[RMDB]
RNA sequence: GGGAACGACUCGAGUAGAGUCGAAAAGGAGGAGUAGUUCUCACUACCUCCCCACCUAGUGAGAACUACUGGUGGAGCCUUAGGUACGGUGGACAUGCGAAAGCAUGUCCAUCGUACUUAAGGCAUAGCACCAUCUAGGGUUCGCCCUAGAUGGUGCAAAAGAAACAACAACAACAAC
Reactivity to DMS in 0.01 (KOAc 150mM, MgCl2 10mM, bicine 150mM(pH8.5), 24C), signal-to-noise 1, nucleotides 027 to 126: g010g010a080g040g000a030g000u000a010g000u000u000c000u000c000a040c000u000a030c090c060u010c030c010c000c020a130c300c180u000a030g020u010g000a030g000a040a020c000u000a000c000u000g000g010u000g000g030a200g010c000c000u000u000a000g000g010u000a010c000g030g000u020g000g000a010c000a010u000g010c000g010a170a080a120g010c000a000u000g020u000c000c010a010u000c000g010u000a000c000u000u000a000a010g010g010c000a000u000a030